[RMDB]
RNA sequence: GGGAACGACUCGAGUAGAGUCGAAAAUCAGCCAGGUGGUGGCUUGUGAGCAUCUCAUCUCUGUCGCUUCAGGUCAGGCGGCAGUGCUGCCUGCUUAGUCUGCAUUAGACACUAACAGCAAACGCGGCCCACUAGACCAUUUCGAUGGUCUAGUGGGAAAAGAAACAACAACAACAAC
Reactivity to DMS in 0.01 (KOAc 150mM, MgCl2 10mM, bicine 150mM(pH8.5), 24C), signal-to-noise 2, nucleotides 027 to 126: u010c090a090g040c030c030a060g010g030u010g020g050u000g010g010c030u010u000g000u030g020a040g010c080a050u020c090u010c020a090u010c020u000c010u000g020u000c050g010c020u010u000c070a080g030g010u010c060a070g000g020c020g010g000c000a100g000u000g000c060u000g010c060c030u010g000c070u000u000a120g010u000c040u000g040c170a130u010u030a030g020a070c040a080c050u000a080a090c110a080g010c090a070a060a100c180g000c050g000g010
Reactivity to 2A3 in 0.01 (KOAc 150mM, MgCl2 10mM, bicine 150mM(pH8.5), 24C), signal-to-noise 1, nucleotides 027 to 126: u100c010a010g030c000c000a050g070g130u070g060g130u010g020g010c030u080u070g030u020g030a050g020c030a130u020c050u020c060a070u030c010u010c030u020g060u040c000g030c000u040u040c100a040g060g060u130c070a000g000g000c010g040g010c020a020g000u020g030c000u020g000c000c000u030g030c020u070u010a040g000u000c070u020g000c040a180u100u150a030g040a050c020a010c090u060a090a030c040a120g020c050a040a000a130c080g030c030g060g010